[RMDB]
RNA sequence: GGGAACGACUCGAGUAGAGUCGAAAAUCACACACUAAGAGACAUCUGAUAGCGUAGUGUGCAACAUUACGAUGUCAUAGUGCUUUACGUAAGAACUGACAUCAGGUGUCUUACGUAAUUGUGUGAAGAUAGUUAUCUGAUUCGUCAGGUAGCUAUCAAAAGAAACAACAACAACAAC
Reactivity to 2A3 in 0.01 (KOAc 150mM, MgCl2 10mM, bicine 150mM(pH8.5), 24C), signal-to-noise 9, nucleotides 027 to 126: u020c000a010c000a000c000a000c030u110a140a020g030a000g010a050c000a030u020c020u020g020a040u090a050g120c020g010u010a010g020u030g060u130g290c090a130a060c000a010u000u020a010c020g050a050u050g010u010c010a050u110a060g060u070g040c010u060u030u050a110c160g080u140a010a010g010a040a020c020u030g060a030c020a090u100c030a050g030g010u060g050u010c000u000u020a010c020g050u060a040a120u090u040g000u000g000u000g010a020a020
Reactivity to DMS in 0.01 (KOAc 150mM, MgCl2 10mM, bicine 150mM(pH8.5), 24C), signal-to-noise 9, nucleotides 027 to 126: u000c010a030c000a010c000a030c130u020a130a160g000a040g000a020c000a020u010c050u000g000a030u020a210g010c010g020u000a010g020u000g010u020g010c300a110a090c010a000u000u000a010c020g010a140u020g000u000c010a050u030a060g010u010g010c010u000u000u020a060c130g010u020a020a010g010a060a020c020u000g010a080c120a110u020c040a030g000g020u010g000u000c000u000u000a030c120g010u010a050a060u020u010g010u000g000u000g010a030a080